[RMDB]
RNA sequence: GGGAACGACUCGAGUAGAGUCGAAAAGGAUAGCGGGCCGAGUGUGGCCAGGCCAGCGAGCCUGGUACGGUAAAAACGCCUCGUGCUGACCAGGUUUGGUCGGGGGUCAACCCGCAGCCAAUCCUGCUCCUACCUGGGAGCCGGUGCUGUUCACAGACACCCUGUAGUAGUUCGCUACUACAGGGUGAAAAGAAACAACAACAACAAC
Reactivity to 2A3 in 0.01 (KOAc 150mM, MgCl2 10mM, bicine 150mM(pH8.5), 24C), signal-to-noise 1, nucleotides 027 to 156: g060g030a080u130a140g000c000g010g020g010c030c000g000a090g030u210g030u080g090g060c060c000a010g000g000c000c010a090g150c060g100a050g030c010c000u000g000g000u050a060c090g000g020u080a090a050a020a000a000c020g000c050c010u040c040g110u130g070c050u060g000a000c000c000a120g020g130u130u150u140g040g000u050c020g010g010g010g000g000u000c010a000a050c020c030c030g050c000a010g040c020c000a030a030u090c010c010u000g000c000u000c020c000u030a300c000c040u130g030g000g010a000g020c000c000g010g010u030g000c010u020g010u080u090c060a040c010a130g060a010